[RMDB]
RNA sequence: GGGAACGACUCGAGUAGAGUCGAAAAGGGGUCGCUCUAAGACAGUCGUCUGUAUUGAAGGGUUAAGAGGACAUGCUCCAUACUGAAGCCUCCACGGUAUGUGAGCAACAGCCUCUUAACCCUUCAAUACAGACGAUCGAGAGCGACGGAGGCACCCGUCACUUAAUAAGUUCGCUUAUUAAGUGACAAAAGAAACAACAACAACAAC
Reactivity to DMS in 0.01 (KOAc 150mM, MgCl2 10mM, bicine 150mM(pH8.5), 24C), signal-to-noise 1, nucleotides 027 to 156: g020g010g040g070u000c000g040c000u010c000u000a120a200g020a140c300a060g020u010c020g020u000c000u000g020u000a000u000u000g000a020a010g000g000g020u000u000a000a010g000a040g020g020a050c070a300u010g000c000u020c010c000a000u000a020c000u010g000a030a200g010c020c030u000c000c020a300c040g010g030u010a010u000g000u000g030a020g010c010a020a040c100a120g020c000c000u000c000u000u050a000a030c000c000c000u000u010c000a000a020u000a040c000a020g000a000c010g000a000u000c070g000a050g000a050g000c000g010a000c010g030g020a050g030g000c020a120c040c000c060
The record gives the reactivity of an RNA of 207 nucleotides to DMS. Values cover nucleotides 27 to 156. The RNA was probed in 150 mM KOAc, 10 mM MgCl2 and 150 mM bicine (pH 8.5) at 24 C. DMS (dimethyl sulfate) methylates the pairing face of unpaired adenines and cytosines.